RNA sequence: GGGAACGACUCGAGUAGAGUCGAAAAAAAAGAUAUGGAACCAAGACCAGACGCCGUCACGUUUGACGGAGCUCGGAAACGAGCUCCCGAGUGACGGAACUACGUCGUGAGGUUCCUAAGUCAAAAACCUACUACAUAGGUUCGCCUAUGUAGUAGGAAAAGAAACAACAACAACAAC
Reactivity to 2A3 in 0.01 (KOAc 150mM, MgCl2 10mM, bicine 150mM(pH8.5), 24C), signal-to-noise 3, nucleotides 027 to 126: a010a030a020a050g070a030u100a040u100g000g000a000a000c010c000a020a020g190a110c150c110a180g010a020c030g010c030c000g010u000c010a030c040g060u090u300u300g040a020c040g000g000a000g000c000u000c000g010g020a030a060a060c010g010a000g000c010u020c000c000c000g070a070g000u000g000a000c000g000g000a010a000c010u110a020c020g000u000c000g010u000g010a030g000g000u000u000c000c000u000a040a010g030u010c050a000a060a020a120a110
Reactivity to DMS in 0.01 (KOAc 150mM, MgCl2 10mM, bicine 150mM(pH8.5), 24C), signal-to-noise 4, nucleotides 027 to 126: a060a040a080a140g010a060u000a300u010g010g000a020a010c000c010a060a300g010a280c130c070a120g030a020c040g010c000c000g000u000c010a020c020g000u000u000u000g010a190c300g000g000a010g020c000u000c000g010g000a060a070a170c000g020a020g010c000u000c000c000c000g010a130g000u000g000a020c010g000g000a020a010c120u010a300c050g010u000c010g010u010g000a140g000g000u000u000c000c000u000a010a120g010u020c030a060a120a050a130a130